[RMDB]
RNA sequence: GGGAACGACUCGAGUAGAGUCGAAAAGAUAUGGAAGGUCCUUUUGACGCUGACAUAUCGGAAACGAUAUGCCAGCGAUAAGGCCUUCCUAAGUCAAAAUCUAACACUUGUUCGCAAGUGUUAGAAACGAUGUGUAAAGGUUCGCCUUUACACAUCGAAAAGAAACAACAACAACAAC
Reactivity to 2A3 in 0.01 (KOAc 150mM, MgCl2 10mM, bicine 150mM(pH8.5), 24C), signal-to-noise 4, nucleotides 027 to 126: g010a020u040a020u070g000g040a010a000g000g040u300c040c010u100u040u070u170g270a150c160g000c010u010g010a010c010a010u000a000u000c000g000g000a020a050a000c010g000a010u000a000u010g010c000c000a000g000c000g000a000u000a000a000g010g000c000c010u000u000c000c000u010a030a000g020u000c020a020a020a000a250u000c010u010a000a000c000a000c000u020u030g040u120u110c280g040c130a000a010g000u000g000u010u000a000g000a010a000a010
Reactivity to DMS in 0.01 (KOAc 150mM, MgCl2 10mM, bicine 150mM(pH8.5), 24C), signal-to-noise 3, nucleotides 027 to 126: g000a030u000a300u010g000g000a030a000g010g010u010c010c010u000u000u010u010g030a170c110g010c000u010g000a010c000a010u000a000u000c000g020g000a080a060a120c000g000a030u000a010u000g000c010c000a000g020c010g010a030u000a000a030g010g000c000c000u000u010c000c000u000a000a060g000u000c010a120a060a110a140u000c000u010a000a010c000a000c000u000u000g010u000u030c220g010c020a010a010g010u010g010u000u000a000g000a020a060a150